[RMDB]
RNA sequence: GGGAACGACUCGAGUAGAGUCGAAAAGAUAUGGAAAUGAUGAUGACCCCUAGUCUUAGCAACAGCUAUAUGGUCGGAAACGACCAAUAGACAUGCUAAGACUAGGGGUCAUCCCAUUUCCUAAGUCCGAUACGGAAUGGUUCGCCAUUCCGUAUCGAAAAGAAACAACAACAACAAC
Reactivity to DMS in 0.01 (KOAc 150mM, MgCl2 10mM, bicine 150mM(pH8.5), 24C), signal-to-noise 2, nucleotides 027 to 126: g020a170u010a300u000g010g000a000a010a000u000g010a040u030g030a020u010g020a030c000c000c000c000u010a010g010u000c000u000u000a000g010c010a020a090c300a170g000c020u000a010u000a180u020g010g000u000c020g000g000a110a070a230c000g020a030c000c000a010a020u000a010g000a060c090a240u010g020c000u000a000a000g040a000c000u000a000g010g030g010g010u010c000a000u000c020c290c000a010u000u000u000c000c000u000a020a110g020u000c050